The data come from the RNA Mapping Database (RMDB), library 15KREP. This 177-nucleotide RNA was probed chemically with 2A3 and DMS. For 2A3 the reverse transcriptase was SuperScript II with manganese. The DMS profile rests on 4,272 reads.
[RMDB]
RNA sequence: GGGAACGACUCGAGUAGAGUCGAAAAUGCGUAAUUCUAAUGGUGCUUGCAUUUGGAACGCUGCUGCAUAUAUGAAACUCUCGGAUGCACUUAAACGACAGAUUCGCAUUGCAUGCCGUAAGUGUAAUCACAGUAAAGUGUUCGCACUUUACUGUGAAAAAGAAACAACAACAACAAC
Reactivity to 2A3 in 0.01 (KOAc 150mM, MgCl2 10mM, bicine 150mM(pH8.5), 24C), signal-to-noise 3, nucleotides 027 to 126: u080g000c010g030u050a020a100u060u010c030u060a090a060u120g080g000u060g050c060u050u090g020c010a070u030u040u060g050g030a050a040c030g000c030u030g010c020u020g020c040a010u040a000u010a020u200g080a100a060a020c000u010c000u010c010g030g010a030u040g020c030a030c040u050u120a100a090a030c030g060a010c020a070g070a130u150u000c010g000c030a000u000u070g010c020a010u060g100c000c000g040u030a040a020g010u000g030u060a080a060
Reactivity to DMS in 0.01 (KOAc 150mM, MgCl2 10mM, bicine 150mM(pH8.5), 24C), signal-to-noise 4, nucleotides 027 to 126: u000g000c020g020u010a110a090u010u000c030u000a050a090u010g000g030u000g000c070u000u000g020c010a030u000u000u020g020g000a070a090c100g010c110u000g020c050u010g000c040a070u010a050u000a100u010g000a070a060a090c060u000c070u000c030g010g000a140u010g000c030a040c100u000u000a030a060a140c040g000a040c110a050g000a160u010u010c050g000c080a050u000u010g010c070a070u000g010c000c040g020u000a030a050g010u010g010u010a060a130